The record gives the reactivity of an RNA of 207 nucleotides to 2A3 and DMS. Values cover nucleotides 27 to 156. For 2A3, 1,146 sequencing reads were counted. In probing experiments dimethyl sulfate is read out at A N1 and C N3, which are open when not base-paired. For DMS the reverse transcriptase was MarathonRT. The RNA was probed in 150 mM KOAc, 10 mM MgCl2 and 150 mM bicine (pH 8.5) at 24 C.
RNA sequence: GGGAACGACUCGAGUAGAGUCGAAAAGGCUGGGGAGGCCUCAGGAAGCUUACAAUUGUGGCAGAAAGGGCAGCAAACGUGUCUUUCUUCACAUGGUGGUGGCAGGAGAGAGAAAUGAGUGCCCAUUGAAAGGGGAAAUCCCUUAUAAAACCAUCAACCUUUUAGCUCGAUUCGUCGAGCUAAAAGGAAAAGAAACAACAACAACAAC
Reactivity to 2A3 in 0.01 (KOAc 150mM, MgCl2 10mM, bicine 150mM(pH8.5), 24C), signal-to-noise 2, nucleotides 027 to 156: g040g000c040u050g010g000g050g010a030g020g050c000c000u010c000a010g010g100a080a000g000c030u080u020a060c020a130a180u090u020g010u050g000g050c040a030g090a050a150a040g020g040g000c000a030g000c050a140a040a080c050g050u030g050u040c000u000u030u020c010u040u020c010a040c010a070u070g000g010u030g010g000u000g030g000c010a020g030g000a010g000a000g000a000g000a040a100a010u100g020a050g030u050g020c000c010c010a000u060u060g080a010a020a020g000g000g000g040a000a030a080u160c010c010c000u040u020a110u090a030a080a000a030c020c010a050u070c010a040a140
Reactivity to DMS in 0.01 (KOAc 150mM, MgCl2 10mM, bicine 150mM(pH8.5), 24C), signal-to-noise 1, nucleotides 027 to 156: g030g040c060u010g030g010g080g050a180g000g110c080c000u000c050a050g000g020a150a140g020c010u020u020a190c090a090a220u000u010g060u090g000g080c100a050g010a050a040a090g070g030g040c060a040g010c050a050a080a060c200g040u000g010u000c000u000u000u000c000u030u010c010a060c090a080u000g020g020u000g020g050u010g050g020c030a100g010g030a060g020a060g000a160g020a060a040a160u000g050a100g060u000g010c030c000c020a080u000u020g010a060a000a030g000g000g030g000a030a080a140u010c020c010c000u010u000a090u010a040a040a140a040c040c020a060u000c010a080a270
Annotation
The DMS profile rests on 1,682 reads.